[RMDB]
RNA sequence: GGGAACGACUCGAGUAGAGUCGAAAAAGAAGACUGUUGUAGUAAGUGAUGCUGUAAAAGUUAUUAGUGCUAUGAGUAAGCUUUAUAUGACUGUUUCAGUUAGUUAACAAUAAGAAAGGAGAAUAAUAAUGGCACAACAAAUAAAAGCAAGAGAUACCGGGUACAUCUUAUUCGUAAGAUGUACCCGAAAAGAAACAACAACAACAAC
Reactivity to 2A3 in 0.01 (KOAc 150mM, MgCl2 10mM, bicine 150mM(pH8.5), 24C), signal-to-noise 3, nucleotides 027 to 156: a000g090a010a010g040a010c110u040g010u030u010g010u040a070g010u020a120a090g010u020g060a040u050g000c030u030g030u070a000a090a020a000g050u020u040a110u050u150a060g030u030g040c020u040a030u140g010a060g050u090a070a010g010c000u020u040u030a100u010a020u070g030a010c020u010g060u170u070u220c030a010g020u000u070a020g010u020u080a060a000c040a060a100u090a170a040g070a030a050a020g070g040a060g050a040a030u140a140a010u120a050a020u050g010g010c000a000c010a100a040c040a030a090a010u130a050a070a040a000g010c030a060a010g020a000g010a080u020a050c000
Reactivity to DMS in 0.01 (KOAc 150mM, MgCl2 10mM, bicine 150mM(pH8.5), 24C), signal-to-noise 1, nucleotides 027 to 156: a130g000a080a140g020a080c050u000g010u000u000g000u020a110g010u010a090a080g030u000g010a090u000g010c010u000g000u050a070a040a110a150g020u020u000a060u000u000a070g030u000g010c010u000a020u010g000a180g050u010a080a140g000c020u000u000u000a080u080a130u030g000a030c030u000g000u000u000u000c060a090g000u000u050a060g010u000u020a080a080c070a060a060u000a010a080g000a010a020a060g000g020a120g020a130a100u010a020a100u000a050a080u000g030g010c020a030c030a050a090c120a040a050a140u000a020a050a080a060g020c070a090a130g000a160g000a060u000a080c110

Description
The record gives the reactivity of an RNA of 207 nucleotides to 2A3 and DMS. The 2A3 profile rests on 1,726 reads. Source: RMDB library OK3TST, as collected in RNAgym.